The record gives the reactivity of an RNA of 177 nucleotides to DMS and 2A3.
The data come from the RNA Mapping Database (RMDB), library TTRDES.
Conditions: 150 mM KOAc, 10 mM MgCl2 and 150 mM bicine (pH 8.5), 24 C.
The 2A3 profile rests on 2,168 reads.
DMS (dimethyl sulfate) methylates the pairing face of unpaired adenines and cytosines.
The DMS profile rests on 1,025 reads.
RNA sequence: GGGAACGACUCGAGUAGAGUCGAAAAGAUAUGGAUGCUAUGAGGGAGUUCACCUUCGGAAACGAAGGAGAACGAGGAUCUCACGCAUCCUAAGUCAAAGCGUCGUAGUCUUCGGACUACGACGCAACUAUGGCCCUAGGUUCGCCUAGGGCCAUAGAAAAGAAACAACAACAACAAC
Reactivity to DMS in 0.01 (KOAc 150mM, MgCl2 10mM, bicine 150mM(pH8.5), 24C), signal-to-noise 1, nucleotides 027 to 126: g000a040u000a090u010g000g000a010u000g030c000u040a250u010g020a020g040g000g000a060g020u000u000c010a220c020c000u000u010c000g040g000a040a040a100c000g020a010a020g020g010a080g030a010a000c020g010a120g000g050a090u010c000u000c010a030c300g000c000a020u010c010c000u000a000a020g000u010c010a100a130a130g010c000g010u000c010g030u000a000g010u000c000u020u000c280g020g000a030c000u000a000c020g000a010c010g010c000a010a010
Reactivity to 2A3 in 0.01 (KOAc 150mM, MgCl2 10mM, bicine 150mM(pH8.5), 24C), signal-to-noise 1, nucleotides 027 to 126: g000a010u050a010u090g000g010a000u010g050c000u050a090u300g030a000g030g080g050a150g000u040u010c040a220c040c000u000u000c030g000g000a030a020a020c010g000a000a000g050g010a020g000a000a020c010g030a120g060g080a060u000c000u000c000a030c100g040c000a000u000c000c000u010a020a030g010u000c040a190a090a040g030c020g000u000c000g000u000a020g000u020c050u030u130c300g030g010a000c010u040a000c020g010a000c000g030c000a000a000